This 177-nucleotide RNA was probed chemically with DMS and 2A3.
DMS adducts were read by reverse transcription with MarathonRT.
The reactions ran in a buffer of 150 mM KOAc, 10 mM MgCl2 and 150 mM bicine (pH 8.5), at 24 C.
The DMS profile rests on 2,342 reads.
Reactivities are given for positions 27 through 126.
[RMDB]
RNA sequence: GGGAACGACUCGAGUAGAGUCGAAAAUCGUCGCCGGCCCGAUGCAGACCGACAUAACCACCAUGGCAAAUCAGAUCCGCGUUGAGUACCGGGUUGUCACAGACACCAUGGCUCAAACCGGUGAUGAAUCGUCCAGAGAAUUCGUUCUCUGGACGAUAAAAGAAACAACAACAACAAC
Reactivity to DMS in 0.01 (KOAc 150mM, MgCl2 10mM, bicine 150mM(pH8.5), 24C), signal-to-noise 3, nucleotides 027 to 126: u010c050g010u020c050g010c020c000g010g020c040c030c020g000a060u000g000c060a030g010a090c060c030g000a080c070a070u010a110a090c070c020a120c100c100a050u000g000g020c080a050a110a080u010c040a090g000a130u010c000c020g010c260g000u000u000g010a030g030u000a100c010c030g010g000g030u010u010g030u010c030a160c200a160g000a030c020a030c010c010a070u000g020g000c010u000c010a010a040a130c030c010g000g000u000g010a130u000g000a040
Reactivity to 2A3 in 0.01 (KOAc 150mM, MgCl2 10mM, bicine 150mM(pH8.5), 24C), signal-to-noise 2, nucleotides 027 to 126: u050c010g030u020c030g000c050c000g000g060c030c000c000g030a010u120g050c010a020g020a040c010c030g040a040c030a070u150a050a040c050c020a020c040c040a090u130g060g000c060a050a040a120u050c010a010g030a090u010c000c000g000c050g040u000u040g050a020g010u030a100c020c010g030g000g010u090u130g040u050c070a130c060a300g020a000c020a030c020c020a070u110g010g020c000u030c030a080a100a100c010c030g000g000u010g020a010u050g020a020